[RMDB]
RNA sequence: GGGAACGACUCGAGUAGAGUCGAAAAAAGGACAGCCAGGGAAAGCUGUUCAGAAACAUCCUCAAGGAAAAGGGGAUCGUGGUGGGAAUCAAGGUGAACACCUCCAUUCACACCUCACUUCUGCUUUGUCCUAGGCAAACUCCAAGCACACUGGCAAGCCAUGCAGAUAUUUCGAUAUCUGCAUGGCAAAAGAAACAACAACAACAAC
Reactivity to 2A3 in 0.01 (KOAc 150mM, MgCl2 10mM, bicine 150mM(pH8.5), 24C), signal-to-noise 2, nucleotides 027 to 156: a000a000g020g020a010c000a000g000c020c030a010g000g000g060a020a060a000g010c020u010g010u020u000c000a000g080a040a060a000c050a030u000c000c010u030c050a040a090g150g010a030a130a040a040g030g000g000g010a020u080c150g030u040g020g010u080g000g000g010a030a020u110c120a200a030g040g010u050g070a110a020c070a030c110c000u000c010c040a000u020u030c010a030c000a010c010c000u020c030a070c070u050u030c020u100g090c070u090u040u070g070u070c010c000u020a040g010g000c030a040a030a060c020u000c000c020a020a020g070c040a010c010a010c100u060g050g000c050a040a000